RNA sequence: GGGAACGACUCGAGUAGAGUCGAAAACCCCCUCUAGCACAGGGGGCCUCAGAAAUCGUCAGGUGGUGACUGGAGCUGAGAGGUGGCCACUCUGUUACCAUGGUGAGCAGUCUAUGGGGUAGGGCAUUCUGUAUCUUGUGUGCACACGGAUGCAUGCCAUUACUUUUGCAUUCGUGCAAAAGUAAUGAAAAGAAACAACAACAACAAC
Reactivity to DMS in 0.01 (KOAc 150mM, MgCl2 10mM, bicine 150mM(pH8.5), 24C), signal-to-noise 2, nucleotides 027 to 156: c000c030c000c010c000u010c010u000a200g010c140a200c180a050g010g000g020g030g020c000c030u000c000a110g000a090a090a060u010c040g010u000c020a070g000g060u010g020g010u010g000a070c050u020g020g010a130g000c060u010g010a110g000a110g030g020u000g010g010c020c030a040c040u010c010u020g020u010u000a070c040c020a130u020g020g020u000g020a120g020c060a110g010u000c050u000a130u010g010g000g010g030u000a060g000g030g010c040a090u010u000c040u040g010u010a100u000c060u000u020g030u020g030u000g040c000a070c040a110c090g000g000a090u000g000c000a030u000g020c060
Reactivity to 2A3 in 0.01 (KOAc 150mM, MgCl2 10mM, bicine 150mM(pH8.5), 24C), signal-to-noise 5, nucleotides 027 to 156: c000c000c000c000c000u010c020u050a030g020c040a010c020a040g000g000g000g010g020c000c010u060c010a050g120a060a120a060u160c100g080u070c040a040g000g060u030g050g020u040g070a060c040u080g040g030a030g030c060u040g060a030g000a020g090g050u050g050g020c030c000a030c020u050c010u040g060u060u040a090c000c030a070u100g040g020u070g040a050g020c040a010g040u010c020u080a100u130g020g040g000g000u040a030g010g020g010c020a050u100u060c040u100g080u070a080u060c020u060u120g010u000g010u050g030c030a020c000a020c130g080g000a030u020g010c010a000u040g020c010
Structure probing data (DMS and 2A3) for a 207-nucleotide construct. DMS adducts were read by reverse transcription with MarathonRT. It was measured as part of the RMDB library OK3TST.